An RNA of 177 nucleotides, treated with 2A3 and DMS and read out base by base. It was measured as part of the RMDB library OK2TRN. The DMS profile rests on 73,885 reads. The 2A3 profile rests on 74,152 reads. For 2A3 the reverse transcriptase was SuperScript II with manganese.
RNA sequence: GGGAACGACUCGAGUAGAGUCGAAAAUCGCAUAAUAGCGUAUGCGGCGUAUAUACGCGCGUAUUAUCGCAUAUAUUAUGCGAUAGCGCGCCGCGCGCGCUAUGCGAUACGCCGCGCGGCGUAUGCGCAGAUGAUGAAUAUUCGUAUUCAUCAUCUGAAAAGAAACAACAACAACAAC
Reactivity to 2A3 in 0.01 (KOAc 150mM, MgCl2 10mM, bicine 150mM(pH8.5), 24C), signal-to-noise 9, nucleotides 027 to 126: u010c000g000c000a000u010a030a030u030a100g020c010g010u030a030u050g010c000g030g000c010g040u020a150u030a040u060a300c020g030c020g010c010g020u020a080u140u100a060u190c020g000c070a010u120a010u020a010u260u040a000u010g000c000g000a000u000a000g000c020g000c000g000c000c010g000c000g000c010g000c020g000c040u050a040u130g040c020g070a050u020a070c060g000c010c030g000c010g010c040g080g000c010g000u010a050u200g030c030g000
Reactivity to DMS in 0.01 (KOAc 150mM, MgCl2 10mM, bicine 150mM(pH8.5), 24C), signal-to-noise 9, nucleotides 027 to 126: u000c000g010c010a020u000a040a030u000a070g020c010g020u000a040u000g010c000g010g010c010g020u000a130u010a120u010a040c050g010c010g010c010g020u000a030u010u000a030u010c010g020c000a110u010a300u010a060u000u000a010u000g000c000g010a000u000a020g020c040g000c000g010c010c020g010c020g010c010g010c170g020c070u000a050u010g010c190g010a110u000a030c110g010c020c010g010c020g010c050g000g000c000g010u000a010u000g020c020g010